Annotation: Chemical mapping of a 177-nucleotide RNA with DMS and 2A3. For 2A3, 4,959 sequencing reads were counted. Source: RMDB library RFMREP, as collected in RNAgym. Reactivities are given for positions 27 through 126. Conditions: 150 mM KOAc, 10 mM MgCl2 and 150 mM bicine (pH 8.5), 24 C.

RNA sequence: GGGAACGACUCGAGUAGAGUCGAAAAGCUUCGCCUACCAAGCGUACCAACGCCGCAUUGUAGCAAACGAGGAGUCCAAGGUGGCGCAGCCUCUCGGGCCUCUCAUUUGCUGCGCUGCAGCGCUGGUGACUAGUUCAUAGUUCGCUAUGAACUAGUCAAAAGAAACAACAACAACAAC
Reactivity to DMS in 0.01 (KOAc 150mM, MgCl2 10mM, bicine 150mM(pH8.5), 24C), signal-to-noise 1, nucleotides 027 to 126: g020c160u000u000c040g020c040c040u000a190c040c050a110a180g000c050g000u010a080c010c010a000a020c000g020c000c030g030c010a020u000u000g030u000a000g000c000a020a020a010c030g020a010g020g000a080g020u000c010c000a020a020g020g010u010g010g060c000g000c300a150g020c000c000u000c010u000c080g010g010g010c000c010u000c020u000c010a050u000u010u000g000c000u000g020c020g000c120u000g010c010a040g010c000g020c000u010g000g000u000
Reactivity to 2A3 in 0.01 (KOAc 150mM, MgCl2 10mM, bicine 150mM(pH8.5), 24C), signal-to-noise 2, nucleotides 027 to 126: g020c040u120u110c030g000c010c000u000a040c010c030a020a010g000c000g050u050a040c000c010a020a010c010g010c000c010g000c010a020u000u040g010u020a000g000c000a020a000a000c020g010a010g010g000a010g000u000c000c000a040a010g120g110u130g030g080c120g040c100a050g020c010c000u010c000u010c030g020g020g000c000c010u020c000u010c000a010u000u020u020g000c000u000g000c000g010c020u010g000c000a010g010c000g000c010u020g000g020u000